An RNA of 207 nucleotides, treated with DMS and 2A3 and read out base by base. For DMS the reverse transcriptase was MarathonRT. For DMS, 2,921 sequencing reads were counted. The data come from the RNA Mapping Database (RMDB), library OK3TST. The reactions ran in a buffer of 150 mM KOAc, 10 mM MgCl2 and 150 mM bicine (pH 8.5), at 24 C.
RNA sequence: GGGAACGACUCGAGUAGAGUCGAAAAGGGAUAAGAGGAGACUCUUAUCCCCACGUCGUUGUUCGCAACGACGAUUAACCGGUGGCCGCCCGCCCAGGCCACCGUUACUCCACUCCACUCCUUCGGGACUGGUUUGGAGGAACAUAACAGGGCUAAACAUUAUAUACCGAUUCGUCGGUAUAUAAUGAAAAGAAACAACAACAACAAC
Reactivity to DMS in 0.01 (KOAc 150mM, MgCl2 10mM, bicine 150mM(pH8.5), 24C), signal-to-noise 1, nucleotides 027 to 156: g010g030g030a050u000a000a000g010a020g010g010a300g020a300c020u000c000u000u000a010u000c000c000c000c000a020c030g000u000c000g020u000u000g020u000u000c250g020c000a090a060c020g000a020c000g010a080u000u000a090a030c000c010g000g020u000g030g030c000c010g010c110c020c120g000c000c010c010a190g040g000c000c000a010c010c010g040u000u020a030c010u010c000c000a010c000u000c010c010a030c020u020c000c010u010u020c300g050g020g000a070c020u000g020g040u000u000u000g010g020a010g010g010a030a020c020a130u000a170a110c070a080g000g020g020c020u020a090a110a240
Reactivity to 2A3 in 0.01 (KOAc 150mM, MgCl2 10mM, bicine 150mM(pH8.5), 24C), signal-to-noise 3, nucleotides 027 to 156: g000g000g000a010u000a000a000g000a000g020g000a040g040a050c000u000c000u010u000a000u000c000c000c000c000a030c010g000u000c000g000u010u000g030u040u070c220g010c110a000a000c000g000a000c000g010a020u070u150a050a050c050c040g000g000u000g000g020c010c020g060c040c090c060g020c010c010c010a000g000g000c010c000a000c000c000g000u000u060a010c010u000c000c010a000c000u020c000c000a000c010u000c010c010u030u070c210g060g000g000a000c000u000g010g000u000u000u000g000g010a000g010g000a010a020c020a020u170a060a040c060a100g000g010g000c000u020a040a040a000